[RMDB]
RNA sequence: GGGAACGACUCGAGUAGAGUCGAAAAGAAACCGCGCAAAAUUGUCAAAUGCGGACAACCGUCAGAAUUUCGGGCGGAAUUACAACAUUAUACAGAAAGCCGGCCGAAAUGUCGUAUAGCGCGGAAACAGUAAUGGCUAUUUCGAUAGCCAUUACUGAAAAGAAACAACAACAACAAC
Reactivity to 2A3 in 0.01 (KOAc 150mM, MgCl2 10mM, bicine 150mM(pH8.5), 24C), signal-to-noise 5, nucleotides 027 to 126: g060a040a080a010c000c000g000c000g000c010a020a050a010a190u060u050g030u020c030a010a050a270u230g100c130g060g000a000c020a030a020c040c040g090u110c040a050g060a130a060u010u000u000c030g000g020g030c020g020g130a010a030u200u110a030c010a090a020c020a050u110u250a200u230a170c080a030g190a020a050a000g030c010c000g090g070c020c010g000a000a000a000u040g060u010c010g020u060a080u090a080g000c010g000c000g010g000a000a010a000
Reactivity to DMS in 0.01 (KOAc 150mM, MgCl2 10mM, bicine 150mM(pH8.5), 24C), signal-to-noise 6, nucleotides 027 to 126: g020a110a080a110c010c000g020c000g010c000a100a070a140a140u020u000g010u000c030a050a140a130u050g010c230g000g010a030c080a080a110c180c050g020u010c120a120g010a100a030u000u000u000c000g010g000g000c000g000g010a040a040u030u020a130c290a100a090c160a100u050u040a110u040a100c200a130g020a090a120a150g000c000c010g010g000c000c000g000a000a010a010u000g000u000c050g020u010a070u010a100g010c000g000c000g010g000a070a040a140
The data come from the RNA Mapping Database (RMDB), library OK1LIB.
The record gives the reactivity of an RNA of 177 nucleotides to 2A3 and DMS.
The RNA was probed in 150 mM KOAc, 10 mM MgCl2 and 150 mM bicine (pH 8.5) at 24 C.
The 2A3 profile rests on 5,210 reads.